[RMDB]
Source information
This 207-nucleotide RNA was probed chemically with DMS and 2A3. The data come from the RNA Mapping Database (RMDB), library OK3TST. The RNA was probed in 150 mM KOAc, 10 mM MgCl2 and 150 mM bicine (pH 8.5) at 24 C. The DMS profile rests on 5,700 reads. The 2A3 profile rests on 3,671 reads. For DMS the reverse transcriptase was MarathonRT.
RNA sequence: GGGAACGACUCGAGUAGAGUCGAAAAGAGACAGACACAGGGGCUGUGUGCCUCAACCAGGGGGAUCUAUGGGCAGAACUGGAGAAGUCUCAAGGGCUGGCCUCUCUCUUGGCACGUAUGUUCUGCCUUUCUACUGCUUUCCUCACCUUCACCCCAACAAACAUUAACUCUUCGGAGUUAAUGUUUGAAAAGAAACAACAACAACAAC
Reactivity to DMS in 0.01 (KOAc 150mM, MgCl2 10mM, bicine 150mM(pH8.5), 24C), signal-to-noise 2, nucleotides 027 to 156: g030a070g030a060c040a030g010a080c050a050c050a110g010g020g000g040c070u000g030u000g020u000g020c000c010u000c040a060a110c070c040a140g000g010g010g020g000a080u000c080u010a120u000g030g000g010c010a040g010a050a030c040u000g000g010a150g000a170a060g010u000c030u010c030a060a090g030g030g060c080u000g010g010c000c000u000c010u000c010u000c020u000u000g000g010c080a080c060g000u010a120u020g000u000u000c020u010g000c020c020u000u000u000c040u000a110c080u020g010c050u010u000u000c020c010u000c040a040c030c030u000u010c040a250c020c010c000c010a030a300
Reactivity to 2A3 in 0.01 (KOAc 150mM, MgCl2 10mM, bicine 150mM(pH8.5), 24C), signal-to-noise 4, nucleotides 027 to 156: g060a020g010a010c040a030g030a000c010a000c030a120g020g000g000g020c030u030g040u040g070u120g170c000c020u040c050a020a060c040c060a060g000g020g000g000g020a010u020c030u150a090u180g050g050g000c010a000g000a020a020c030u060g040g090a100g040a130a040g040u030c020u030c070a000a020g050g010g000c050u040g010g020c020c000u040c010u000c000u010c000u000u040g000g010c030a010c070g120u190a060u160g020u010u000c000u010g020c010c010u020u030u000c010u020a040c020u020g050c010u030u050u010c000c000u020c010a040c000c010u070u070c060a090c000c070c070c000a000a060